[RMDB]
RNA sequence: GGGAACGACUCGAGUAGAGUCGAAAAAGCGUUCUCGGUCGUUGAGGGUGCGGUGUAUCUUCUCCAGGACGUGGUAGAGGUGGCUCUGGACGUUGAGAUACAUGGGCAUGAGCCCGUCCCGGGGGUGGAGGUAGCACCACUGCAGAGCUUCAUGCUCACCGUACUCCAAUUUCGAUUGGAGUACGGUAAAAGAAACAACAACAACAAC
Reactivity to 2A3 in 0.01 (KOAc 150mM, MgCl2 10mM, bicine 150mM(pH8.5), 24C), signal-to-noise 3, nucleotides 027 to 156: a000g100c020g000u030u010c000u000c010g000g080u110c090g000u030u060g030a030g070g020g000u020g030c040g000g000u080g010u080a140u020c030u140u000c000u000c000c030a020g000g010a000c030g140u300g040g020u110a060g020a040g080g300u080g050g020c000u010c020u030g100g030a100c090g060u130u230g060a030g000a030u120a130c090a040u060g030g000g010c000a030u150g050a070g060c000c000c000g000u010c000c000c000g110g000g000g010g020u070g020g010a020g040g000u080a010g040c000a000c000c000a060c000u060g070c090a040g000a000g020c020u170u150c140a110u300g000c000u000c000
This 207-nucleotide RNA was probed chemically with 2A3. The RNA was probed in 150 mM KOAc, 10 mM MgCl2 and 150 mM bicine (pH 8.5) at 24 C. For 2A3, 1,049 sequencing reads were counted. Source: RMDB library OK3TST, as collected in RNAgym.